[RMDB]
RNA sequence: GGGAACGACUCGAGUAGAGUCGAAAAGGGGUCCAAGUGAUCUUGGAUUUAACAAGCUUUUGACGAGCUGAAGCCUCCACGGCUCGAUAAGCUUGUUUGUCAGAUCCUUGGACGGAGGCACCCAAAAGUCAGGCUGCUGUUCGCAGCAGCCUGACAACUCUCGAAUAAUCUUCGGAUUAUUCGAGAGAAAAGAAACAACAACAACAAC
Reactivity to 2A3 in 0.01 (KOAc 150mM, MgCl2 10mM, bicine 150mM(pH8.5), 24C), signal-to-noise 2, nucleotides 027 to 156: g100g010g010g000u080c010c000a010a000g100u100g140a000u000c090u170u280g130g020a100u240u260u300a020a010c000a020a000g020c010u070u110u250u300g190a110c130g000a010g000c000u010g020a080a030g020c000c000u000c010c010a020c060g000g080c000u010c020g060a040u010a170a000g010c010u010u020g040u060u090u120g080u040c010a010g000a010u010c010c020u000u010g000g000a000c010g000g000a000g010g000c070a020c000c000c000a050a280a000a020g000u020c000a000g000g000c000u010g000c010u040g130u090u180c300g010c120a030g000c020a000g020c040c000u000g000a000c000a010a010

Chemical mapping of a 207-nucleotide RNA with 2A3. For 2A3, 678 sequencing reads were counted. The RNA was probed in 150 mM KOAc, 10 mM MgCl2 and 150 mM bicine (pH 8.5) at 24 C. The data come from the RNA Mapping Database (RMDB), library RNAMAK. For 2A3 the reverse transcriptase was SuperScript II with manganese.